RNA sequence: GGGAACGACUCGAGUAGAGUCGAAAAGCCCUGAUUAGUGUGUGAAGAACUGGCACAUCUCCACGAGGUUGUAAGGAAGGUGAAAAGAUCGCUCUUAAUUAGAUUAAAAACAUUGUUUUCUUCCUGUAUGCACAUAGACUUUCGAGUCUAUGUGCAUAAAAGAAACAACAACAACAAC
Reactivity to DMS in 0.01 (KOAc 150mM, MgCl2 10mM, bicine 150mM(pH8.5), 24C), signal-to-noise 2, nucleotides 027 to 126: g000c010c010c000u020g000a100u010u030a030g000u020g020u000g000u000g000a070a120g000a050a090c010u000g030g000c070a070c120a010u000c040u000c040c030a090c080g020a210g040g000u010u010g030u000a140a020g000g010a080a060g000g040u000g000a040a030a040a190g030a040u010c060g000c070u000c060u000u000a070a040u000u030a030g000a230u010u010a010a060a060a080a110c130a130u030u000g000u000u000u020u000c020u000u000c100c080u000g000u000
Reactivity to 2A3 in 0.01 (KOAc 150mM, MgCl2 10mM, bicine 150mM(pH8.5), 24C), signal-to-noise 1, nucleotides 027 to 126: g220c070c000c000u150g090a240u160u180a170g000u000g000u140g000u010g140a040a070g000a140a040c020u000g050g000c110a040c000a000u000c000u000c000c000a080c080g000a100g160g160u150u220g000u240a000a000g000g020a000a030g000g040u190g000a030a020a030a030g050a300u100c100g070c000u010c000u020u000a010a000u190u010a010g070a070u000u300a070a000a000a120a000c000a000u030u030g000u000u000u000u060c080u050u000c050c000u040g060u000
Record summary: Conditions: 150 mM KOAc, 10 mM MgCl2 and 150 mM bicine (pH 8.5), 24 C. The record gives the reactivity of an RNA of 177 nucleotides to DMS and 2A3. Values are in units of 0.01, from 0 to 300, in steps of 10. For 2A3, 319 sequencing reads were counted.